The record gives the reactivity of an RNA of 177 nucleotides to 2A3 and DMS. Reactivities are given for positions 27 through 126. DMS adducts were read by reverse transcription with MarathonRT. The data come from the RNA Mapping Database (RMDB), libraries RFM100 and RFMREP.
RNA sequence: GGGAACGACUCGAGUAGAGUCGAAAACUGCCCCUAGUACGAGAGGACCGGGGUGGACGGACCUCCGGUGAACCGGUUGUCGACCAACGGCAUGGCCGGGUAGCCGCGUCCGGCGCGGAUAACCGCUCUAAUGCAUGUGGUUCGCCACAUGCAUUAGAAAAGAAACAACAACAACAAC
Reactivity to 2A3 in 0.01 (KOAc 150mM, MgCl2 10mM, bicine 150mM(pH8.5), 24C), signal-to-noise 7, nucleotides 027 to 126: c000u010g000c000c000c000c000u010a010g020u010a010c010g010a010g010a060g130g000a000c020c020g000g000g000g000u010g020g010a010c000g000g000a010c000c010u040c030c020g000g020u050g040a130a030c000c000g010g000u050u010g000u000c010g020a230c050c100a210a150c020g010g010c010a040u100g140g000c000c010g000g020g000u010a010g000c000c000g010c020g000u010c000c000g000g010c010g000c010g000g020a080u150a280a080c010c000g000c010u000
Reactivity to DMS in 0.01 (KOAc 150mM, MgCl2 10mM, bicine 150mM(pH8.5), 24C), signal-to-noise 4, nucleotides 027 to 126: c030u010g010c010c000c010c000u000a080g000u000a120c020g010a170g030a170g000g010a070c300c160g000g030g000g010u010g010g010a140c000g000g010a040c030c030u000c060c010g000g020u000g010a160a300c000c010g010g020u000u000g010u010c000g000a170c270c290a100a160c030g020g000c010a050u090g020g020c000c020g000g000g000u010a300g000c010c000g010c100g010u000c010c010g000g000c050g010c010g000g000a110u030a130a140c010c000g020c020u010